[RMDB]
RNA sequence: GGGAACGACUCGAGUAGAGUCGAAAAGAUCAUGGAAGCACUACUUGUACCGCCAGCCCUUCUAGGGUUAUCUCGUGGUCAAUCUGGGUCAUACUCAUUGUCAUCAAACCAAUUUGACAUCUUCAUGAUUCACCUUGAGAGCAUUCAGCGUGACAUCCGCGGAAAGCUUCUUCGGAAGCUUUCCGCGAAAAGAAACAACAACAACAAC
Reactivity to 2A3 in 0.01 (KOAc 150mM, MgCl2 10mM, bicine 150mM(pH8.5), 24C), signal-to-noise 1, nucleotides 027 to 156: g000a040u030c030a010u070g070g030a060a030g060c070a000c070u070a050c000u130u090g010u090a020c050c000g000c010c050a010g000c010c000c000u210u170c150u210a120g060g000g000u090u070a110u090c090u000c000g000u020g000g040u010c010a000a070u000c060u050g000g000g050u050c030a080u060a080c030u030c120a040u040u110g040u010c010a030u030c020a060a080a160c080c030a160a180u010u020u060g010a030c020a040u050c020u060u050c000a000u130g010a000u040u030c000a070c010c000u020u070g060a030g000a000g100c000a010u090u050c070a010g000c030g040u010g020a020c020a090u130c000
Source information:
The record gives the reactivity of an RNA of 207 nucleotides to 2A3. Values are in units of 0.01, from 0 to 300, in steps of 10. Source: RMDB library OK3TST, as collected in RNAgym.